[RMDB]
RNA sequence: GGGAACGACUCGAGUAGAGUCGAAAAGAAAGAAAGAUCUCUCUGUUCGGCUUCUUUUCGGCGAGCAGCGGCAAUGUCGGCAGGAUAAGUGAACUGCACGCUGUAGUAGAGGUCAGACUGCUCUUAAGUAAUGGCCUGAUUUCGAUCAGGCCAUUACAAAAGAAACAACAACAACAAC
Reactivity to DMS in 0.01 (KOAc 150mM, MgCl2 10mM, bicine 150mM(pH8.5), 24C), signal-to-noise 1, nucleotides 027 to 126: g000a030a070a040g000a130a140a110g000a080u000c000u000c000u000c020u000g000u000u010c090g010g010c020u010u000c090u020u010u000u010c050g000g000c040g000a070g060c060a050g000c040g080g000c050a080a070u000g030u020c030g000g000c100a030g000g000a180u000a110a140g000u020g000a140a170c000u000g040c020a120c050g050c000u000g040u000a080g000u020a040g000a030g000g010u000c000a080g000a250c040u000g000c070u000c030u020u000a010a300
Reactivity to 2A3 in 0.01 (KOAc 150mM, MgCl2 10mM, bicine 150mM(pH8.5), 24C), signal-to-noise 3, nucleotides 027 to 126: g040a030a080a000g050a000a070a030g050a030u030c030u000c030u020c030u020g070u020u070c000g120g010c040u020u000c000u040u230u030u110c020g030g040c030g020a050g000c000a000g010c010g070g000c030a100a080u190g080u140c030g080g120c000a060g050g100a080u110a220a180g110u120g090a050a020c020u010g030c010a030c010g010c020u010g000u070a050g000u020a010g020a010g010g000u000c020a020g040a000c020u040g030c040u010c010u070u090a090a020

Chemical mapping of a 177-nucleotide RNA with DMS and 2A3.
The DMS profile rests on 1,731 reads.
For 2A3 the reverse transcriptase was SuperScript II with manganese.
DMS adducts were read by reverse transcription with MarathonRT.